Annotation:
The data come from the RNA Mapping Database (RMDB), library M2RFPK. An RNA of 207 nucleotides, treated with 2A3 and DMS and read out base by base. The RNA was probed in 150 mM KOAc, 10 mM MgCl2 and 150 mM bicine (pH 8.5) at 24 C.
RNA sequence: GGGAACGACUCGAGUAGAGUCGAAAACACAAUUCUCUAAUCGAUGAGAAGCGUGUGGAAAAUUAGGGAAGGGCUACGGCUAUAAUCCUAAGAAAGCUUAUCUACAAGCGGAGGUAUUCUCAGAACGAAAACCAUUUGGCGUUCGCGCCAAAUGGAACCAUAUUUGGUCCUUCGGGACCAAAUAUGGAAAAGAAACAACAACAACAAC
Reactivity to 2A3 in 0.01 (KOAc 150mM, MgCl2 10mM, bicine 150mM(pH8.5), 24C), signal-to-noise 3, nucleotides 027 to 156: c040a000c010a030a080u020u000c010u000c000u070a150a280u210c190g060a070u130g020a010g000a010a050g010c050g020u010g000u070g010g000a110a140a040a080u060u040a050g000g010g040a020a110g100g020g000c040u010a010c140g050g000c000u020a010u010a240a080u060c000c010u010a020a000g050a090a060a000g010c010u070u080a080u160c070u150a080c080a170a010g030c040g040g030a020g020g060u060a060u080u010c040u000c010a060g090a120a050c080g060a030a040a070a120c000c000a000u000u000u000g000g000c000g020u030u030c190g000c000g000c060c000a000a000a000u000g000g000a000a000
Reactivity to DMS in 0.01 (KOAc 150mM, MgCl2 10mM, bicine 150mM(pH8.5), 24C), signal-to-noise 1, nucleotides 027 to 156: c000a040c010a060a300u000u000c000u000c000u000a130a140u000c200g000a130u000g000a090g000a020a050g020c230g000u020g030u000g050g020a090a120a100a090u000u000a060g000g000g040a100a130g000g040g030c000u040a070c150g050g000c020u000a100u010a100a130u000c040c010u000a070a090g000a090a120a270g000c040u000u000a130u010c060u000a230c060a090a050g000c050g000g000a020g000g040u000a100u000u000c000u040c040a220g000a070a170c110g000a140a040a110a140c020c000a000u000u010u010g000g000c000g060u000u000c300g060c050g000c000c000a000a000a010u020g000g000a010a070
Annotation: For 2A3, 1,178 sequencing reads were counted. Reactivities are rounded to 0.1 and cut off at 0 and 3.